[RMDB]
RNA sequence: GGGAACGACUCGAGUAGAGUCGAAAAGCGUGACCAUGCUGAUCGUCAUGAGUCCAUGUAUGUGCAGUCCAUGACUACUGGUACGUACCAUGGAUCGGUACGUACUCAUGCUCAGAUCGUCAGUACCCUGGGACAUGUAGUUCGCUACAUGUCCCAGAAAAGAAACAACAACAACAAC
Reactivity to DMS in 0.01 (KOAc 150mM, MgCl2 10mM, bicine 150mM(pH8.5), 24C), signal-to-noise 5, nucleotides 027 to 126: g010c080g010u000g010a080c040c070a130u020g000c020u000g000a040u000c150g020u020c030a070u010g020a080g020u010c140c040a050u010g020u000a040u010g030u000g010c030a110g020u010c070c080a070u000g000a050c060u000a060c090u020g000g000u020a030c060g020u000a000c300c010a110u000g010g010a050u010c130g010g010u000a000c000g000u000a010c000u030c150a060u000g000c050u000c020a030g000a030u000c190g000u000c030a040g000u000a130c070c060
Reactivity to 2A3 in 0.01 (KOAc 150mM, MgCl2 10mM, bicine 150mM(pH8.5), 24C), signal-to-noise 6, nucleotides 027 to 126: g050c080g100u070g030a040c010c000a060u200g000c010u020g020a070u110c050g070u030c020a160u020g040a030g070u050c110c050a050u130g080u060a060u100g090u080g050c060a020g020u000c040c000a040u070g000a020c010u050a000c040u110g070g120u140a050c060g000u010a010c000c020a060u130g150g030a140u120c060g060g020u010a000c000g000u010a010c000u000c020a000u080g000c010u010c010a020g000a060u050c030g020u010c000a010g030u090a130c030c010